[RMDB]
RNA sequence: GGGAACGACUCGAGUAGAGUCGAAAACAAUAGAAAACCAUUUUGAUACUUCAUUUGAACUUGAAGCGGCCUUGGAGUCUCGGGUUAAGCGGCAGUUAUUAAAAGAGAUUAAGAGUAUUUGCCCGCCGUAUUACUCACAAUUCGUUGUGAGUAAUACAAAAGAAACAACAACAACAAC
Reactivity to DMS in 0.01 (KOAc 150mM, MgCl2 10mM, bicine 150mM(pH8.5), 24C), signal-to-noise 4, nucleotides 027 to 126: c070a080a090u000a110g000a110a090a110a120c040c050a090u000u000u010u010g020a100u010a060c040u000u000c020a040u000u010u000g000a090a120c120u010u010g010a050a050g030c060g000g010c060c020u000u000g020g010a110g020u010c040u000c050g000g010g010u010u010a050a080g010c090g000g000c040a020g010u010u000a040u010u000a040a030a090a090g000a120g000a090u010u000a070a100g000a100g000u000a050u000u000u000g010c030c010c020g040c170c150
Reactivity to 2A3 in 0.01 (KOAc 150mM, MgCl2 10mM, bicine 150mM(pH8.5), 24C), signal-to-noise 3, nucleotides 027 to 126: c010a060a120u180a150g140a030a090a010a030c030c010a030u110u070u040u150g070a080u060a130c030u010u030c030a060u040u030u220g070a120a030c030u030u040g010a040a010g000c010g030g000c010c010u040u100g060g000a050g030u000c040u030c040g060g000g000u070u040a080a000g000c030g030g000c010a020g020u040u070a060u080u110a100a110a020a020g060a000g010a010u100u070a060a030g030a030g090u050a060u050u090u080g020c000c020c000g000c000c000
An RNA of 177 nucleotides, treated with DMS and 2A3 and read out base by base.
DMS adducts were read by reverse transcription with MarathonRT.
The DMS profile rests on 4,189 reads.
Reactivities are given for positions 27 through 126.
The 2A3 profile rests on 3,376 reads.